The record gives the reactivity of an RNA of 207 nucleotides to 2A3 and DMS.

[RMDB]
RNA sequence: GGGAACGACUCGAGUAGAGUCGAAAAUGUGUCCUAGGGAAUUGGAAGGUCAUCCUUCACAGGAUCGUGUGGAAGUCCUGCUCGGGGCGAAAGCAUUAAAACCAUUCGAGCUAGUCAAUGCGUGGCGUUACCUCCAGGUUCUUCGGAACCUGGAGAACAGAUCCUUAUUCUUCGGAAUAAGGAUCUGAAAAGAAACAACAACAACAAC
Reactivity to 2A3 in 0.01 (KOAc 150mM, MgCl2 10mM, bicine 150mM(pH8.5), 24C), signal-to-noise 3, nucleotides 027 to 156: u100g050u020g010u000c020c030u040a070g010g020g040a070a150u120u090g040g050a080a030g040g080u170c090a070u150c020c020u050u100c030a000c010a080g060g020a060u100c090g050u080g000u040g090g050a070a060g020u030c020c010u040g010c040u030c020g000g000g030g000c030g030a070a060a000g010c020a020u080u240a020a090a050a100c030c030a020u060u170c050g030a000g030c030u040a010g090u100c050a040a060u060g030c080g070u040g060g000c050g060u090u100a070c000c000u000c000c000a000g010g000u010u000c010u020u040c170g050g000a020a000c010c000u000g010g000a000g010a010a000
Reactivity to DMS in 0.01 (KOAc 150mM, MgCl2 10mM, bicine 150mM(pH8.5), 24C), signal-to-noise 2, nucleotides 027 to 156: u010g020u000g030u010c030c050u000a130g000g030g040a090a100u000u010g010g000a060a000g020g020u000c070a170u000c030c020u000u000c090a130c100a040g000g010a040u000c050g030u000g020u030g040g010a120a120g010u000c040c030u000g000c050u000c040g000g030g000g070c030g000a070a110a080g000c050a090u010u010a060a100a140a110c040c030a180u000u010c020g020a080g020c030u020a100g010u000c050a060a050u000g020c080g000u000g000g000c050g000u010u000a100c130c000u000c000c010a010g000g010u000u000c020u000u000c300g040g010a000a000c020c000u000g010g000a010g010a020a050

For DMS, 3,815 sequencing reads were counted. Reactivities are given for positions 27 through 156. For DMS the reverse transcriptase was MarathonRT. Conditions: 150 mM KOAc, 10 mM MgCl2 and 150 mM bicine (pH 8.5), 24 C. The data come from the RNA Mapping Database (RMDB), library M2RFPK.